[RMDB]
Chemical mapping of a 207-nucleotide RNA with 2A3 and DMS.
RNA sequence: GGGAACGACUCGAGUAGAGUCGAAAACAGCAUCUAGAGGUGGCCAAUGAGACUGCUGGCUAAGAGGAUUUCCUGCCAAGUAGGGUGUCCUGGCCAAUGAGAGCUCGCUAAGCCAAUGACAUCAUCACUUCAUGAAAGCUCAGUGAAAUAUAGCCAACAUUAGGGAUGGAUUCGUCCAUCCCUAAUGAAAAGAAACAACAACAACAAC
Reactivity to 2A3 in 0.01 (KOAc 150mM, MgCl2 10mM, bicine 150mM(pH8.5), 24C), signal-to-noise 4, nucleotides 027 to 156: c010a010g030c010a050u030c060u080a040g020a020g060g070u030g010g020c020c000a040a050u090g010a010g020a070c050u040g020c000u000g070g000c010u060a110a060g060a020g140g000a050u030u040u080c000c010u020g070c050c040a130a040g030u060a030g070g000g040u030g020u000c010c000u010g000g000c000c010a010a040u090g020a080g010a030g000c040u020c050g020c060u040a050a040g020c000c000a050a050u040g000a040c010a060u060c000a000u050c000a020c050u070u050c010a040u080g070a120a040a020g010c020u020c060a010g010u030g070a020a070a010u190a030u070a050g070c060c030a030a020
Reactivity to DMS in 0.01 (KOAc 150mM, MgCl2 10mM, bicine 150mM(pH8.5), 24C), signal-to-noise 4, nucleotides 027 to 156: c050a140g020c020a110u000c040u010a120g000a190g010g050u010g020g010c010c020a100a120u000g000a190g010a090c040u010g010c040u010g010g030c030u010a050a100g000a090g020g000a120u000u000u000c000c020u000g030c110c100a050a170g040u010a060g010g020g010u000g010u000c010c070u000g000g000c010c030a060a180u000g020a130g000a150g020c110u000c050g020c040u000a090a100g000c000c010a070a140u000g000a080c050a070u010c050a090u020c080a070c040u000u030c040a100u000g010a080a100a100g020c020u000c020a060g020u010g000a070a090a070u000a100u000a100g020c030c020a040a300

Source: RMDB library OK3TST, as collected in RNAgym.